[RMDB]
RNA sequence: GGGAACGACUCGAGUAGAGUCGAAAAGAUCAAUUAUGAUUGCAAGGUAAUAUGUCAAGGCAGACAUAUCUAGCUGUCGCCUUAGCUAGAGAUAGCCGAAUUAUUGCUUUCAUAAGAACGGCAAGAAAUUACGUACCGUGUUCGCACGGUACGUAAUAAAAGAAACAACAACAACAAC
Reactivity to 2A3 in 0.01 (KOAc 150mM, MgCl2 10mM, bicine 150mM(pH8.5), 24C), signal-to-noise 2, nucleotides 027 to 126: g050a140u140c010a020a080u050u020a030u030g000a020u010u020g000c000a000a040g000g020u070a050a070u100a070u110g030u140c040a030a140g190g010c060a050g010a030c010a030u110a050u020c020u020a010g050c040u020g070u090c080g050c050c030u030u060a010g040c010u040a000g000a030g000a070u090a030g040c020c010g050a000a090u240u050a040u110u050g000c010u000u000u010c000a000u020a020a000g030a060a000c050g060g000c040a050a020g100a170a180
Reactivity to DMS in 0.01 (KOAc 150mM, MgCl2 10mM, bicine 150mM(pH8.5), 24C), signal-to-noise 3, nucleotides 027 to 126: g000a070u000c070a110a080u000u010a010u000g000a010u000u000g010c020a030a050g010g000u000a130a070u000a030u000g010u010c080a090a060g040g040c040a130g010a030c100a040u000a050u000c050u000a070g000c040u000g020u000c130g020c090c060u010u000a060g030c030u020a010g010a120g000a150u000a100g010c020c040g010a060a080u010u000a190u000u000g000c010u000u000u000c010a020u010a030a020g010a070a100c140g020g020c100a070a070g010a050a090